[RMDB]
RNA sequence: GGGAACGACUCGAGUAGAGUCGAAAACAUGGGGAACUACAUCUGUGUAGCGAGUUCGAUUCUCGCCAGGGCCUGGUCCUGUAGCUCAGUUGGUAGAGCAAGCUGUUCCCCGGACACUUGUCGUCAUAAAAGUUGCCCCCGUUCGCGGGGGCAACAACUAUACUGCGUUCUUCGGAACGCAGUAUAGAAAAGAAACAACAACAACAAC
Reactivity to DMS in 0.01 (KOAc 150mM, MgCl2 10mM, bicine 150mM(pH8.5), 24C), signal-to-noise 1, nucleotides 027 to 156: c090a200u000g040g030g000g050a050a030c010u000a010c060a030u020c120u010g040u000g000u000a040g010c010g090a060g020u020u010c060g000a300u000u000c000u000c040g020c050c000a060g020g010g020c040c130u000g040g020u000c000c030u000g020u000a110g020c000u000c060a100g000u010u000g000g000u000a160g000a100g040c070a220a070g000c080u000g010u010u000c010c010c000c020g010g010a030c020a090c300u000u000g010u010c010g000u000c030a130u030a120a040a040a220g010u000u020g020c000c010c000c040c010g010u000u010c260g030c060g010g010g050g040g010c000a000a010c000a020a070
Description
Conditions: 150 mM KOAc, 10 mM MgCl2 and 150 mM bicine (pH 8.5), 24 C. Chemical mapping of a 207-nucleotide RNA with DMS. Reactivities are rounded to 0.1 and cut off at 0 and 3. High DMS reactivity at an A or C suggests that its Watson-Crick edge is free.